[RMDB]
RNA sequence: GGGAACGACUCGAGUAGAGUCGAAAACUACUUUUAACGUUAUUUUACUUAUUCCGUGGGUCGGAAGCGGGGCAUCGCCCCUCCUUUUGGCUCUAAGGCCCGGCCUUGCCGGGCCGAUCCGGGCGGAUAUGUACCUUAUAUUCGUAUAAGGUACAUAAAAAGAAACAACAACAACAAC
Reactivity to DMS in 0.01 (KOAc 150mM, MgCl2 10mM, bicine 150mM(pH8.5), 24C), signal-to-noise 2, nucleotides 027 to 126: c040u000a110c120u010u000u010u010a050a100c180g000u000u000a100u020u010u010u010a050c030u000u020a100u000u000c000c010g030u010g010g000g000u020c010g030g020a010a030g080c300g000g000g000g020c030a070u000c300g020c090c000c000c000u000c180c010u000u030u010u000g000g000c000u000c010u030a100a130g000g060c000c060c000g020g000c000c150u040u000g070c030c030g040g000g160c000c000g000a000u010c090c090g000g000g000c000g000g000a040
Reactivity to 2A3 in 0.01 (KOAc 150mM, MgCl2 10mM, bicine 150mM(pH8.5), 24C), signal-to-noise 2, nucleotides 027 to 126: c020u070a040c040u100u140u030u260a200a030c070g060u030u030a140u050u160u060u080a140c030u080u080a110u200u050c010c000g000u080g000g000g010u000c000g000g020a000a000g000c020g000g000g010g000c000a080u240c260g060c020c000c000c010u080c000c010u000u000u020u020g000g000c000u000c000u000a020a020g010g000c030c000c000g000g000c150c240u140u220g050c000c080g000g000g000c010c020g000a000u010c000c000g080g200g000c000g000g000a020